Annotation:
The data come from the RNA Mapping Database (RMDB), library M2RFPK. This 207-nucleotide RNA was probed chemically with 2A3 and DMS. The reactions ran in a buffer of 150 mM KOAc, 10 mM MgCl2 and 150 mM bicine (pH 8.5), at 24 C.
RNA sequence: GGGAACGACUCGAGUAGAGUCGAAAACAGAACUGGAUGGGCCGUGUGCUUAACCAGGACAAGAUGUCCUUCUCUCCAACGUUGUUGCCAACUCAUGAUUCUCCUAACCUGUGCUUGGAGAGACGUGCUACCAUAUAGGUGUUCGCACCUAUAUGAACAGGUAGAGAAAGUUCGCUUUCUCUACCUGAAAAGAAACAACAACAACAAC
Reactivity to 2A3 in 0.01 (KOAc 150mM, MgCl2 10mM, bicine 150mM(pH8.5), 24C), signal-to-noise 2, nucleotides 027 to 156: c060a040g090a070a030c030u020g030g020a080u040g070g010g040c050c070g300u170g110u230g070c000u050u070a130a080c020c000a000g010g030a000c050a110a110g030a190u170g020u050c000c000u050u000c010u020c020u020c020c020a050a040c070g000u020u000g020u030u040g080c020c040a050a050c050u040c070a050u100g060a270u160u020c050u000c020c000u090a050a110c010c050u170g090u150g100c080u070u040g010g000a010g000a000g030a020c000g010u030g000c020u050a130c040c040a030u000a000u000a000g040g000u000g030u040u020c190g000c080a000c000c000u000a000u000a000u010g000a010a020
Reactivity to DMS in 0.01 (KOAc 150mM, MgCl2 10mM, bicine 150mM(pH8.5), 24C), signal-to-noise 2, nucleotides 027 to 156: c060a110g000a040a090c020u010g010g020a110u000g000g010g030c000c060g020u020g040u010g050c030u010u000a040a100c030c040a000g000g030a140c060a170a140g030a160u000g010u010c010c030u020u010c020u000c020u020c030c010a060a120c110g010u000u000g000u000u010g010c000c040a070a170c050u000c030a060u000g000a160u010u000c020u000c010c040u010a070a040c020c080u000g020u000g010c050u010u020g020g000a050g000a040g010a040c090g030u000g000c030u010a130c040c010a000u010a010u000a010g070g020u000g030u000u030c300g000c020a010c010c000u010a000u000a000u000g010a070a230